This 177-nucleotide RNA was probed chemically with 2A3 and DMS.
Source: RMDB library RFM100, as collected in RNAgym.
Values cover nucleotides 27 to 126.
RNA sequence: GGGAACGACUCGAGUAGAGUCGAAAACUCCCCGUGGCUCCAGCCAGACCCUAGAGGUCAGCCUUGCGGACCAACAGGAGGACUCCCAGCUUUCCCUUUUCAAGAGGUCCCCAGACACCGGCCACCCCUGUCUGCAUUUUUUCGAAAAUGCAGACAGAAAAGAAACAACAACAACAAC
Reactivity to 2A3 in 0.01 (KOAc 150mM, MgCl2 10mM, bicine 150mM(pH8.5), 24C), signal-to-noise 5, nucleotides 027 to 126: c030u030c010c010c000c010g040u050g010g030c050u020c040c010a020g030c010c000a020g020a050c010c000c000u090a110g020a080g060g020u010c010a010g030c010c050u040u120g050c030g020g010a030c010c020a030a060c020a050g070g040a050g020g050a060c020u010c000c010c010a020g010c010u020u060u060c010c000c000u050u060u060u110c100a130a030g040a050g060g010u010c010c010c000c000a010g020a060c020a010c030c010g030g000c000c010a030c000c000c000
Reactivity to DMS in 0.01 (KOAc 150mM, MgCl2 10mM, bicine 150mM(pH8.5), 24C), signal-to-noise 3, nucleotides 027 to 126: c150u000c000c000c040c110g030u020g000g010c020u030c030c070a110g010c040c050a140g010a070c040c020c000u010a060g010a300g000g000u030c010a060g000c060c130u010u010g030c040g010g000a050c010c010a070a180c190a070g000g000a060g030g000a160c090u000c000c010c040a090g020c070u000u000u000c000c000c010u010u020u020u000c120a050a120g030a150g020g010u000c010c020c000c050a110g010a080c080a030c060c040g010g020c030c040a070c040c050c030